[RMDB]
RNA sequence: GGGAACGACUCGAGUAGAGUCGAAAAACUCGGCCUUGCAGUCGGAACUGUCAUGCGCCGUCUGGUAAUACUCAAUACGACACGGCUGGAGGCAACAAAUCGAGAGCUUCGACGUUAUGAGGCCCUCAGUCCUAGCAUGAUUCGUCAUGCUAGGACUAAAAGAAACAACAACAACAAC
Reactivity to DMS in 0.01 (KOAc 150mM, MgCl2 10mM, bicine 150mM(pH8.5), 24C), signal-to-noise 2, nucleotides 027 to 126: a100c040u000c030g000g020c010c000u000u000g030c120a020g000u000c070g050g000a050a080c150u000g000u040c040a070u010g000c210g000c000c000g000u000c120u020g010g020u000a100a080u000a110c150u000c080a080a120u010a080c070g000a040c080a110c110g000g000c000u010g020g000a080g010g000c040a050a080c110a040a090a050u010c070g000a020g000a010g000c060u000u020c050g000a090c200g020u010u010a080u000g020a030g000g000c000c020c020u010c040
Reactivity to 2A3 in 0.01 (KOAc 150mM, MgCl2 10mM, bicine 150mM(pH8.5), 24C), signal-to-noise 3, nucleotides 027 to 126: a020c020u020c010g030g000c020c000u020u130g240c040a020g010u010c030g080g000a090a100c050u060g040u090c050a050u160g070c050g010c050c000g060u020c110u120g050g000u050a040a050u060a140c030u010c180a020a040u140a110c160g020a030c030a010c080g010g000c020u020g020g060a010g060g000c030a030a030c050a020a120a040u190c050g000a020g010a010g070c020u030u000c010g080a070c050g060u080u060a150u300g000a010g010g000c000c000c000u040c040
The record gives the reactivity of an RNA of 177 nucleotides to DMS and 2A3. The reactions ran in a buffer of 150 mM KOAc, 10 mM MgCl2 and 150 mM bicine (pH 8.5), at 24 C. 2A3 adducts were read by reverse transcription with SuperScript II with manganese. For DMS the reverse transcriptase was MarathonRT.